[RMDB]
RNA sequence: GGGAACGACUCGAGUAGAGUCGAAAAGUCGAGGUCGAAGAUGGACUCGUACUCUCCACUUCAUUGCUUGAUUGCAUGCUAAUCAGAUUCUUCCUUUCUCUCGCCGGGUAGCCGUUGCUGCUUAAGCGAGUUUCUAGUGCCACUUUGUCACUAGUUUAACUUAUUAAGAGUUCGCUCUUAAUAAGUUAAAAGAAACAACAACAACAAC
Reactivity to 2A3 in 0.01 (KOAc 150mM, MgCl2 10mM, bicine 150mM(pH8.5), 24C), signal-to-noise 9, nucleotides 027 to 156: g040u020c010g010a020g050g080u080c070g050a070a040g080a220u190g020g030a030c020u010c070g030u110a070c040u060c010u020c050c010a040c030u100u070c060a100u060u190g030c030u060u060g070a120u100u160g070c030a050u070g020c050u150a120a060u080c030a050g030a210u100u060c030u060u090c030c000u040u140u060c060u000c000u000c020g000c010c010g030g000g000u010a000g000c030c070g190u090u300g010c020u000g000c000u040u030a060a020g000c000g010a000g000u010u060u010c000u000a000g000u000g020c030c030a150c170u110u130u190g030u070c020a000c010u010a000g000u000u000u010
Reactivity to DMS in 0.01 (KOAc 150mM, MgCl2 10mM, bicine 150mM(pH8.5), 24C), signal-to-noise 3, nucleotides 027 to 156: g020u000c010g000a040g020g020u000c030g000a060a150g020a160u010g010g000a040c020u010c060g020u000a040c040u000c030u000c010c020a090c050u000u000c060a140u010u000g000c020u010u000g000a120u000u000g020c040a080u000g010c060u000a100a100u010c060a100g000a120u000u000c040u010u000c010c020u010u000u000c050u010c020u000c030g050c030c040g000g020g010u000a060g010c020c190g000u000u010g020c010u000g010c000u000u000a090a100g030c020g010a060g000u010u000u000c010u000a020g020u000g000c040c050a130c160u000u010u000g000u000c000a020c020u000a030g010u010u000u000